[RMDB]
An RNA of 207 nucleotides, treated with 2A3 and DMS and read out base by base. Values cover nucleotides 27 to 156. The 2A3 profile rests on 3,273 reads. DMS adducts were read by reverse transcription with MarathonRT. It was measured as part of the RMDB library RNAMAK.
RNA sequence: GGGAACGACUCGAGUAGAGUCGAAAACUACCUAUUCGUAGGUAGAAAGCGUACUACCUUGACAUGACGCGGUUUCCGAUGAAACGGUCCCAAAUAGGACCGUGGAGGAAACCCUACGUCAACAGCAAGGUAUCGCAAACGUACGAUUCGUCGUACGCACACUUCCUUGGUUCGCCAAGGAAGUGUGAAAAGAAACAACAACAACAAC
Reactivity to 2A3 in 0.01 (KOAc 150mM, MgCl2 10mM, bicine 150mM(pH8.5), 24C), signal-to-noise 4, nucleotides 027 to 156: c000u000a000c000c000u030a050u040u070c260g100u040a010g000g000u020a020g040a100a040a000g010c030g040u080a140c030u000a000c020c010u020u010g110a140c010a100u070g000a000c050g030c060g010g000u010u000u000c050c100g100a300u030g010a010a010a000c000g000g010u030c010c010c000a230a300a150u280a080g000g000a000c000c000g000u000g010g010a000g000g010a000a000a000c000c000c000u060a030c010g010u000c010a040a030c030a040g040c000a010a000g000g020u010a020u230c000g030c000a100a030a000c020g000u010a000c000g000a020u020u090c210g050u000c000g000u130a000c000g000
Reactivity to DMS in 0.01 (KOAc 150mM, MgCl2 10mM, bicine 150mM(pH8.5), 24C), signal-to-noise 2, nucleotides 027 to 156: c000u000a000c010c010u010a050u000u000c180g050u000a000g010g010u020a020g020a020a030a100g040c040g010u010a090c100u000a010c010c000u000u000g020a020c100a300u010g000a020c020g000c050g000g030u010u000u000c000c000g000a190u010g000a090a140a070c000g020g010u000c010c000c040a030a120a220u000a050g000g010a010c000c000g020u000g000g000a130g020g000a000a000a030c010c010c010u010a000c000g000u010c000a040a150c130a140g010c020a020a020g000g010u000a010u020c020g050c090a120a090a170c030g010u020a010c000g010a040u000u010c260g030u020c010g020u000a010c000g010